[RMDB]
The data come from the RNA Mapping Database (RMDB), library OK1LIB. An RNA of 177 nucleotides, treated with DMS and 2A3 and read out base by base. The 2A3 profile rests on 2,808 reads. Conditions: 150 mM KOAc, 10 mM MgCl2 and 150 mM bicine (pH 8.5), 24 C.
RNA sequence: GGGAACGACUCGAGUAGAGUCGAAAAUGGGGAGGGGUUCCUGGAGAGUGGUGUGUCUUGAGACCUGGGGAGAGGGGAUGCCAUGGACUAAGGCCCAGCAGUGGGGAGCCCAGCUGUGUUCAGGAUGUAAACCUUACACUUUCGAGUGUAAGGUUUAAAAAGAAACAACAACAACAAC
Reactivity to DMS in 0.01 (KOAc 150mM, MgCl2 10mM, bicine 150mM(pH8.5), 24C), signal-to-noise 5, nucleotides 027 to 126: u020g000g000g000g010a110g000g000g010g000u000u010c030c020u000g000g010a130g020a100g020u020g010g000u020g000u020g000u010c040u010u020g010a140g010a090c060c050u020g010g010g000g020a090g010a100g000g000g000g010a080u020g000c020c030a060u020g000g010a090c140u010a070a110g010g010c020c020c020a030g010c070a060g040u020g000g000g000g010a090g010c020c010c030a070g000c050u000g010u020g010u000u010c040a050g000g000a120u020g000
Reactivity to 2A3 in 0.01 (KOAc 150mM, MgCl2 10mM, bicine 150mM(pH8.5), 24C), signal-to-noise 2, nucleotides 027 to 126: u080g010g020g000g020a080g020g020g000g000u070u040c000c020u030g000g060a060g020a030g060u080g030g040u060g060u060g020u070c060u060u190g080a090g020a090c030c040u050g000g000g020g020a130g060a070g010g010g000g000a040u060g030c000c040a060u090g020g000a060c030u080a090a010g040g000c020c000c000a000g000c030a020g060u080g010g030g000g010a020g020c020c000c000a010g030c000u060g020u000g050u060u060c050a030g030g020a010u130g060